[RMDB]
RNA sequence: GGGAACGACUCGAGUAGAGUCGAAAAUCAAGUGAUUCUCCUGACUCAGCCUCCCAAGUAGCUGGGAUUACAGGCAUUCACCACCAUGCCGAGAUAAUUUUGUAUUUUUAAUAGAGACGGAGUUUCACUGUGUUGGUCAGGCUGGUCUCAAACCCCAAUAAUUUAGGCAGUUCGCUGCCUAAAUUAUAAAAGAAACAACAACAACAAC
Reactivity to DMS in 0.01 (KOAc 150mM, MgCl2 10mM, bicine 150mM(pH8.5), 24C), signal-to-noise 1, nucleotides 027 to 156: u000c020a040a100g000u020g010a070u010u010c040u000c000c040u000g020a210c050u000c020a050g050c060c040u000c040c060c070a070a110g020u010a080g020c050u000g000g020g000a090u000u000a040c050a120g020g000c040a090u000u000c070a050c070c060a130c020c050a060u000g000c020c040g010a130g000a230u010a010a090u000u010u000u010g010u010a070u030u000u000u010u000a010a240u000a120g010a090g040a090c050g040g010a030g040u010u000u000c000a010c030u010g020u000g020u000u020g020g000u000c080a050g020g040c030u010g000g000u000c060u010c050a100a050a220c030c020c020c010a120